RNA sequence: GGGAACGACUCGAGUAGAGUCGAAAACUUUAACUAAUGGAUGUACAGUGGGGGGUACAAAUUCAGAGGUGCGGGAAUGAAGCCUCACACAGGUUUAAACAAGCCAUCACAUUUUUCUCAUGAACAAAGUUCUCAUGUUAUUCGUAACAUGAGAACUAAAAGAAACAACAACAACAAC
Reactivity to 2A3 in 0.01 (KOAc 150mM, MgCl2 10mM, bicine 150mM(pH8.5), 24C), signal-to-noise 1, nucleotides 027 to 126: c010u070u130u130a100a010c060u060a050a030u130g030g040a000u000g020u060a020c100a120g050u120g060g160g000g000g000g000u040a000c080a010a180a000u040u060c010a010g010a010g150g000u190g110c080g050g020g040a010a020u040g000a000a070g000c020c030u070c000a070c000a020c010a030g040g170u050u040u130a040a110a000c020a080a000g020c030c000a010u000c010a030c000a080u000u000u000u080u040c000u070c030a030u190g010a040a030c060a050a090
Reactivity to DMS in 0.01 (KOAc 150mM, MgCl2 10mM, bicine 150mM(pH8.5), 24C), signal-to-noise 2, nucleotides 027 to 126: c060u030u010u010a120a110c150u020a090a090u000g010g010a100u000g030u000a060c090a080g010u010g020g010g020g000g000g000u020a050c090a020a060a070u000u000c070a100g000a080g020g000u010g030c180g030g000g000a040a090u000g000a070a140g000c030c000u010c070a030c110a070c060a060g010g010u000u010u000a090a080a140c130a060a120g010c050c010a040u010c060a040c070a070u000u010u010u010u000c030u000c020a080u010g000a070a040c240a060a040